[RMDB]
RNA sequence: GGGAACGACUCGAGUAGAGUCGAAAAGCGUUAGCUAGUGAUAUUUUUGACACUCCUAGCGUACUUCAAGCUACUCUUUCUGAGUUUUCACACUUAGCUACCUUUGCUGAGUUGGAAGCUGCGCAGAGAUAUAUCACUCGUUCGCGAGUGAUAUAUCAAAAGAAACAACAACAACAAC
Reactivity to 2A3 in 0.01 (KOAc 150mM, MgCl2 10mM, bicine 150mM(pH8.5), 24C), signal-to-noise 5, nucleotides 027 to 126: g000c000g000u010u020a000g000c090u010a010g020u010g060a110u040a200u220u210u120u120u230g090a030c020a000c010u000c000c000u000a000g000c000g000u020a030c040u030u060c030a030a030g000c020u030a030c000u000c000u040u110u020c040u060g020a010g010u010u000u000u010c020a050c000a000c040u040u010a000g000c000u080a110c040c080u190u210u110g000c010u000g010a010g000u010u000g000g000a000a010g000c010u050g050c120g010c070a010g040a000
Reactivity to DMS in 0.01 (KOAc 150mM, MgCl2 10mM, bicine 150mM(pH8.5), 24C), signal-to-noise 5, nucleotides 027 to 126: g000c030g020u000u000a020g010c080u000a010g020u010g000a120u010a020u010u000u000u020u010g010a120c050a030c020u000c300c010u000a020g000c010g010u000a050c150u000u020c050a100a170g020c050u000a020c030u000c020u010u000u000c060u000g010a040g020u000u000u000u010c000a050c200a020c010u000u000a010g000c010u000a120c300c200u010u000u010g010c000u000g010a020g010u000u000g010g000a020a000g000c020u000g000c170g020c120a060g010a100